[RMDB]
RNA sequence: GGGAACGACUCGAGUAGAGUCGAAAAGAUAUGGACAUUUGCUGGCAACAGCCUACGGCGUCGGAAACGACGUUAGGACAUGCCGUCAAAUGUCCUAAGUCAAAGCCGUCAGGUUCGCCUGACGGCACUUAACCGUGGUGUUCGCACCACGGUUAAGAAAAGAAACAACAACAACAAC
Reactivity to 2A3 in 0.01 (KOAc 150mM, MgCl2 10mM, bicine 150mM(pH8.5), 24C), signal-to-noise 3, nucleotides 027 to 126: g000a000u020a000u040g020g000a010c010a000u010u010u000g030c060u040g070g000c190a300a050c100a300g000c000c000u050a050c100g140g000c000g010u000c020g000g000a000a010a010c010g000a010c010g020u030u000a000g000g000a010c170a300u300g000c000c000g020u040c000a030a000a010u000g000u030c000c000u010a000a000g000u000c010a070a150a030g010c010c010g020u000c010a010g100g030u050u210c240g090c130c000u000g000a000c010g000g000c000a000
Reactivity to DMS in 0.01 (KOAc 150mM, MgCl2 10mM, bicine 150mM(pH8.5), 24C), signal-to-noise 3, nucleotides 027 to 126: g000a020u000a040u010g010g010a020c000a020u000u020u000g000c010u000g030g060c020a190a040c130a060g010c000c000u000a060c300g000g000c010g010u010c010g010g000a020a020a050c010g020a010c010g000u000u000a000g010g000a020c010a300u000g030c000c010g030u000c020a010a020a000u000g010u000c000c000u000a010a020g000u010c030a170a110a110g010c000c020g010u000c000a000g000g000u000u010c300g010c000c000u000g010a020c000g000g000c000a000